[RMDB]
RNA sequence: GGGAACGACUCGAGUAGAGUCGAAAAACUAAUCCAAAGCAAGUAUAGGAGAACAGGUUUUUAACUAUUUUUAGGCAGAUAAAAAAUAGUAUUUAACAGUCUAACACUAACUGAACAAUAAGUGUUAAAAAGUCGUCUCUGUUCGCAGAGACGACAAUCUUUGAGAUGUGUUCGCACAUCUCAAAGAAAAAGAAACAACAACAACAAC
Reactivity to 2A3 in 0.01 (KOAc 150mM, MgCl2 10mM, bicine 150mM(pH8.5), 24C), signal-to-noise 1, nucleotides 027 to 156: a000c030u010a030a030u020c010c010a030a060a100g000c050a020a060g050u150a050u160a230g090g000a050g020a140a120c120a110g010g000u010u060u050u020u090a050a010c000u010a010u010u000u050u030u000a000g020g010c020a050g100a270u130a050a040a000a000a000a040u000a000g000u010a140u030u120u060a060a050c000a000g000u020c000u010a000a000c010a000c000u020a040a010c000u000g130a060a000c010a030a000u020a050a000g010u030g000u020u010a020a040a020a020a000g000u000c000g000u000c000u000c000u020g100u130u000c200g000c090a000g000a000g000a000c010g000a000c000a000a000